About this RNA
Structure probing data (2A3 and DMS) for a 177-nucleotide construct. It was measured as part of the RMDB library OK1LIB. For 2A3 the reverse transcriptase was SuperScript II with manganese. The reactions ran in a buffer of 150 mM KOAc, 10 mM MgCl2 and 150 mM bicine (pH 8.5), at 24 C. For DMS the reverse transcriptase was MarathonRT. The 2A3 profile rests on 9,570 reads.

[RMDB]
RNA sequence: GGGAACGACUCGAGUAGAGUCGAAAACUUUACGAACAGAGGAAAGCGCGACGUGCGCGUCGUCUAAGAUGAUGCCUCCGACUUUCACUGCCGGUUUGGCGGAACCUCGAACACCAAAUUUGCUGCGCCUACUACCCGUAUUCGUACGGGUAGUAGGAAAAGAAACAACAACAACAAC
Reactivity to 2A3 in 0.01 (KOAc 150mM, MgCl2 10mM, bicine 150mM(pH8.5), 24C), signal-to-noise 9, nucleotides 027 to 126: c020u110u190u220a090c080g090a140a020c050a060g070a050g120g060a080a040a020g040c070g040c060g070a150c100g090u120g030c130g000c010g050u000c000g010u000c030u110a130a090g030a100u100g010a020u090g020c010c000u000c000c010g070a100c020u060u090u030c060a030c060u050g020c000c010g070g020u060u060u120g040g000c010g020g020a050a060c000c010u050c030g040a060a030c040a030c050c030a040a070a120u090u080u130g040c070u060g010c020g040
Reactivity to DMS in 0.01 (KOAc 150mM, MgCl2 10mM, bicine 150mM(pH8.5), 24C), signal-to-noise 3, nucleotides 027 to 126: c050u000u030u030a090c070g000a140a180c150a060g000a140g000g000a070a030a060g000c150g000c100g000a080c200g030u020g000c110g000c010g070u000c000g020u020c090u000a120a110g020a070u010g000a040u000g000c000c040u010c030c010g000a170c030u010u000u010c090a070c040u010g000c010c010g000g000u030u010u020g000g000c050g000g030a080a040c050c030u000c000g000a060a100c060a140c000c020a000a040a080u000u010u000g010c050u000g000c110g020